[RMDB]
RNA sequence: GGGAACGACUCGAGUAGAGUCGAAAAUAAUUGCUUCGCCAUCGCUGCACUGCUGCAAUAAUCGGGGUCAGUGCCGUAGCCGUCAUACAACCCCAUGACACCUUCAAUCACCGCUACAUCGGCAUGGGAUACGCGAUAUUUUCGAAUAUCGCGUAUCAAAAGAAACAACAACAACAAC
Reactivity to 2A3 in 0.01 (KOAc 150mM, MgCl2 10mM, bicine 150mM(pH8.5), 24C), signal-to-noise 4, nucleotides 027 to 126: u070a020a070u100u070g050c030u050u040c030g020c050c000a090u030c040g040c060u040g000c010a030c070u030g010c020u050g000c040a050a150u160a160a100u170c070g000g000g000g030u090c030a020g040u020g020c010c010g000u000a030g050c010c020g020u020c010a020u040a080c030a050a080c010c000c010c000a000u020g000a030c010a030c010c070u100u140c060a050a120u050c000a050c040c030g010c020u070a020c030a110u100c040g000g000c020a030u050g140g000
Reactivity to DMS in 0.01 (KOAc 150mM, MgCl2 10mM, bicine 150mM(pH8.5), 24C), signal-to-noise 4, nucleotides 027 to 126: u010a080a080u000u000g010c040u000u000c060g030c040c020a060u000c100g000c050u000g020c040a070c040u010g000c100u000g000c070a100a060u010a100a110u010c140g010g000g000g000u010c060a100g040u000g000c030c040g010u000a070g020c050c070g000u020c030a060u010a070c200a090a120c020c030c000c040a060u000g010a060c020a090c100c050u010u000c080a080a090u010c040a080c060c030g010c060u010a050c100a070u010c060g020g030c050a090u000g000g010